The record gives the reactivity of an RNA of 177 nucleotides to 2A3 and DMS. The data come from the RNA Mapping Database (RMDB), library M2PK50. DMS adducts were read by reverse transcription with MarathonRT. For DMS, 12,966 sequencing reads were counted.
RNA sequence: GGGAACGACUCGAGUAGAGUCGAAAAUAGGUUGAAUUCGUUCAACCUACAGGCAAGCAAGCAGCGCAACGAGACAAGGGGAUAAUAAGAUAGCGCAUGCUGAUACAUCGGUCUUCGGACCGAUGAACUUCCAUUAAAUCUUCGGAUUUAAUGGAAGAAAAGAAACAACAACAACAAC
Reactivity to 2A3 in 0.01 (KOAc 150mM, MgCl2 10mM, bicine 150mM(pH8.5), 24C), signal-to-noise 9, nucleotides 027 to 126: u050a010g010g000u010u010g010a010a020u090u080c160g040u090u000c010a000a000c000c000u000a030c010a010g090g040c060a030a060g020c020a040a010g000c010a020g010c000g010c020a040a070c060g060a020g030a130c070a090a090g030g010g010g040a030u070a190a040u110a140a070g090a130u110a040g010c010g000c040a040u040g000c000u010g010a010u020a160c010a000u000c000g000g000u000c000u020u040c170g070g000a000c000c000g000a000u000g000a000a010
Reactivity to DMS in 0.01 (KOAc 150mM, MgCl2 10mM, bicine 150mM(pH8.5), 24C), signal-to-noise 8, nucleotides 027 to 126: u000a000g010g010u000u010g000a030a040u000u010c180g020u000u000c000a000a010c000c000u000a000c090a080g010g010c120a070a090g010c100a090a060g010c020a040g010c030g010c030a110a120c140g000a100g000a060c100a060a060g010g000g000g020a170u010a060a070u010a080a090g010a100u000a080g010c020g000c040a070u010g010c030u000g000a130u000a120c000a010u000c000g000g000u000c000u000u010c200g020g010a010c000c000g000a000u000g000a070a100